Overview: Structure probing data (2A3 and DMS) for a 170-nucleotide construct. The data come from the RNA Mapping Database (RMDB), library 15KLIB.

RNA sequence: GGGAACGACUCGAGUAGAGUCGAAAAACUUUUGCAAGAUAGGUAAGGAACAGAAGUGUUGCAUGUGCAAUAGACGCGCUGCAGCGUACUCUUCACCUCUGCAAUCUUAUGCCUGCUGGACUCAUUCGACGAGUCGCGUUCGCGCGACUCAAAAGAAACAACAACAACAAC
Reactivity to 2A3 in 0.01 (KOAc 150mM, MgCl2 10mM, bicine 150mM(pH8.5), 24C), signal-to-noise 4, nucleotides 027 to 129: a050c010u000u040u000u070g010c050a070a110g030a080u070a060g040g030u060a030a070g050g080a100a010c050a060g090a150a010g050u060g000u070u000g000c000a030u180g000u000g000c030a060a100u040a130g080a080c020g000c000g000c060u110g040c030a000g000c030g060u120a140c000u000c000u010u010c000a000c000c000u010c030u000g000c020a010a030u000c010u080u050a060u190g030c000c010u030g000c060u020g020g010a010c000u000c000a100u160u000c040g070a080c070
Reactivity to DMS in 0.01 (KOAc 150mM, MgCl2 10mM, bicine 150mM(pH8.5), 24C), signal-to-noise 3, nucleotides 027 to 129: a070c120u000u000u000u000g130c110a080a060g010a080u030a160g010g050u030a000a000g030g030a100a100c160a080g020a120a040g020u030g000u070u010g030c010a020u100g030u020g010c100a010a020u070a080g010a130c160g020c000g030c130u000g000c060a100g060c040g040u040a080c070u000c010u030u010c020a040c000c000u030c000u000g050c100a070a020u040c100u000u000a030u020g030c040c030u040g000c080u040g070g030a060c010u030c060a150u040u010c120g030a000c000